[RMDB]
RNA sequence: GGGAACGACUCGAGUAGAGUCGAAAAUCUGCGUACCGACCUCGUCUAUCGCCUGCGUAUUGUGGUGACCGACGCCGAUGAUGCGUUACGCCAGGGAAUGCCAGUGACGGUACAAUUCGGUGACGAGUGACUUGUGUUUGUUCGCAAACACAAGUCAAAAAGAAACAACAACAACAAC
Reactivity to DMS in 0.01 (KOAc 150mM, MgCl2 10mM, bicine 150mM(pH8.5), 24C), signal-to-noise 3, nucleotides 027 to 126: u010c030u000g000c080g020u010a070c010c010g000a070c290c050u000c070g000u000c100u000a060u000c030g020c020c010u000g050c190g010u000a030u000u010g010u000g000g030u010g010a100c230c150g020a010c020g010c010c050g020a140u020g000a130u010g020c010g010u000u000a090c030g010c020c020a050g040g010g020a040a030u010g000c000c000a070g010u000g010a120c010g020g010u010a010c130a050a130u000u010c000g000g010u000g010a030c020g000a070g000
Reactivity to 2A3 in 0.01 (KOAc 150mM, MgCl2 10mM, bicine 150mM(pH8.5), 24C), signal-to-noise 3, nucleotides 027 to 126: u050c020u090g080c030g070u050a040c010c000g060a070c070c000u060c050g030u040c060u040a030u040c010g000c010c000u060g030c090g030u030a050u000u120g070u050g030g000u020g050a130c050c180g020a020c020g000c000c010g220a300u240g010a070u220g010c000g010u000u020a010c030g020c010c010a050g070g090g130a000a070u030g000c020c010a030g010u030g110a120c010g040g000u020a020c010a020a060u120u070c010g000g000u020g080a020c000g000a040g050
Chemical mapping of a 177-nucleotide RNA with DMS and 2A3.
The reactions ran in a buffer of 150 mM KOAc, 10 mM MgCl2 and 150 mM bicine (pH 8.5), at 24 C.
For 2A3 the reverse transcriptase was SuperScript II with manganese.
High DMS reactivity at an A or C suggests that its Watson-Crick edge is free.
Values cover nucleotides 27 to 126.
The data come from the RNA Mapping Database (RMDB), library OK2TST.
Reactivities are rounded to 0.1 and cut off at 0 and 3.